[RMDB]
RNA sequence: GGGAACGACUCGAGUAGAGUCGAAAAAAGAUAUGGAGAGGCAGAGGCUGAUGACCCAUGUAGGUACAUAUUCGGAAACGAAUAUCGGAAUGACAUGGCAAGGCCUCUAAGCCUCUCCUAAGUCAAAGUAUUAGUACCGCUUCGGCGGUACUAAUACAAAAGAAACAACAACAACAAC
Reactivity to DMS in 0.01 (KOAc 150mM, MgCl2 10mM, bicine 150mM(pH8.5), 24C), signal-to-noise 2, nucleotides 027 to 126: a130a130g000a020u000a190u000g000g000a000g000a020g020g030c020a080g000a010g020g030c020u020g000a060u000g030a070c300c000c030a000u000g000u000a000g010g040u000a300c090a020u000a010u000u000c000g010g010a020a010a050c000g000a030a000u000a000u000c300g020g020a110a150u040g000a010c000a000u000g020g000c000a080a020g000g010c000c010u010c020u000a040a040g030c000c000u000c000u000c000c000u000a020a080g000u000c000a140a130a160
Structure probing data (DMS) for a 177-nucleotide construct.
The reactions ran in a buffer of 150 mM KOAc, 10 mM MgCl2 and 150 mM bicine (pH 8.5), at 24 C.